[RMDB]
RNA sequence: GGGAACGACUCGAGUAGAGUCGAAAAUAGGGAUGAUUGAAGCAUGGACAACACUGGAGAAAUGGGAUUGGACAAAAGAGGCAUAAUCUAAUACAGAUGGAGUGGGGAAGUCCAACAAGGCCUGUCUACAUUUCUUCCUCUCAGGUAUGGGGCAGAAUAACGCUUUGGUUUUCGAACCAAAGCGUUAAAAAGAAACAACAACAACAAC
Reactivity to 2A3 in 0.01 (KOAc 150mM, MgCl2 10mM, bicine 150mM(pH8.5), 24C), signal-to-noise 1, nucleotides 027 to 156: u180a000g000g000g000a010u040g000a000u090u160g100a090a020g030c050a090u070g030g020a030c000a110a000c030a060c050u030g100g000a010g010a070a050a050u040g000g050g000a040u020u050g020g010a000c040a020a100a030a000g030a040g010g030c020a010u030a110a000u010c020u040a060a010u120a190c050a010g050a040u080g000g000a110g040u020g000g000g000g000a010a010g020u000c050c000a050a000c060a060a050g070g000c030c020u040g000u020c020u050a100c060a040u020u070u050c000u100u020c020c000u020c000u000c090a010g060g000u080a010u090g000g000g000g070c020a020g060a050a010
Overview: This 207-nucleotide RNA was probed chemically with 2A3. The RNA was probed in 150 mM KOAc, 10 mM MgCl2 and 150 mM bicine (pH 8.5) at 24 C.